Annotation
Chemical mapping of a 177-nucleotide RNA with 2A3 and DMS. Values cover nucleotides 27 to 126. 2A3 adducts were read by reverse transcription with SuperScript II with manganese. The 2A3 profile rests on 62,265 reads. For DMS the reverse transcriptase was MarathonRT. The reactions ran in a buffer of 150 mM KOAc, 10 mM MgCl2 and 150 mM bicine (pH 8.5), at 24 C.
RNA sequence: GGGAACGACUCGAGUAGAGUCGAAAAGAUAUGGACCGAUCAUAGACAUGCUCUUGAGUCGGAAACGACUCAAUGAGCAACAGCUAUAUCGGUCCUAAGUCAAAGUUGUGGAGUUCGCUCCACAACAGACAUCUUAUUACUUCGGUAAUAAGAUGUCAAAAGAAACAACAACAACAAC
Reactivity to 2A3 in 0.01 (KOAc 150mM, MgCl2 10mM, bicine 150mM(pH8.5), 24C), signal-to-noise 9, nucleotides 027 to 126: g000a000u010a000u050g000g000a000c000c010g010a020u050c120a010u170a020g050a080c100a250u300g000c000u000c000u010u000g000a000g000u000c000g000g000a020a010a000c010g000a010c010u000c010a000a030u180g000a000g010c010a010a020c020a010g010c000u000a000u000a000u010c000g020g010u000c000c000u000a000a000g000u000c010a050a060a090g000u000u010g000u010g010g000a010g000u070u120c220g160c120u000c000c000a000c000a000a000c000a000
Reactivity to DMS in 0.01 (KOAc 150mM, MgCl2 10mM, bicine 150mM(pH8.5), 24C), signal-to-noise 9, nucleotides 027 to 126: g010a020u000a030u010g000g000a010c000c000g000a010u000c300a010u000a000g010a030c140a200u020g010c000u000c000u000u000g000a020g010u000c000g020g000a010a010a020c000g010a020c000u010c000a000a000u010g000a010g020c000a040a030c240a110g010c000u000a000u000a010u000c000g000g000u000c000c000u000a000a060g000u000c010a130a140a120g010u000u000g010u000g000g000a020g020u000u010c300g020c000u000c000c000a000c000a000a000c010a110